[RMDB]
RNA sequence: GGGAACGACUCGAGUAGAGUCGAAAAGCUAGCCAGCGCACGAUGAGACUGCCGUGACGUCUAGCCUGCGUCUCAACUAGUCUCCAUCAAUCAAAACGCUGGGAUUGAUGUACGAGACUAGUACACAGUGUAAGCACUUGUUCGCAGGUGUUUACACAAAAGAAACAACAACAACAAC
Reactivity to 2A3 in 0.01 (KOAc 150mM, MgCl2 10mM, bicine 150mM(pH8.5), 24C), signal-to-noise 5, nucleotides 027 to 126: g010c010u030a000g010c010c020a020g000c010g000c030a010c010g030a040u100g020a020g050a080c050u080g050c040c010g020u010g010a100c010g020u040c010u010a010g010c000c000u020g030c020g050u000c000u000c010a020a010c000u000a000g000u000c000u000c000c000a000u000c000a000a000u000c010a010a030a040a090c100g020c100u090g050g010g000a000u000u000g000a000u000g010u040a050c060g000a000g000a000c000u000a000g000u030a010c070a000c010a030
Reactivity to DMS in 0.01 (KOAc 150mM, MgCl2 10mM, bicine 150mM(pH8.5), 24C), signal-to-noise 6, nucleotides 027 to 126: g020c010u000a090g000c080c030a080g020c040g000c050a040c020g000a120u010g010a100g010a080c070u020g010c060c020g000u010g000a050c050g000u020c030u000a090g000c020c020u010g010c060g010u020c010u010c060a110a040c020u000a000g000u010c000u000c000c000a000u000c000a000a000u010c010a060a070a110a110c150g000c100u000g000g000g000a000u000u000g000a010u000g000u020a090c170g000a020g010a010c000u000a000g020u000a070c160a120c140a120
Structure probing data (2A3 and DMS) for a 177-nucleotide construct. For 2A3 the reverse transcriptase was SuperScript II with manganese. The 2A3 profile rests on 40,038 reads. The RNA was probed in 150 mM KOAc, 10 mM MgCl2 and 150 mM bicine (pH 8.5) at 24 C.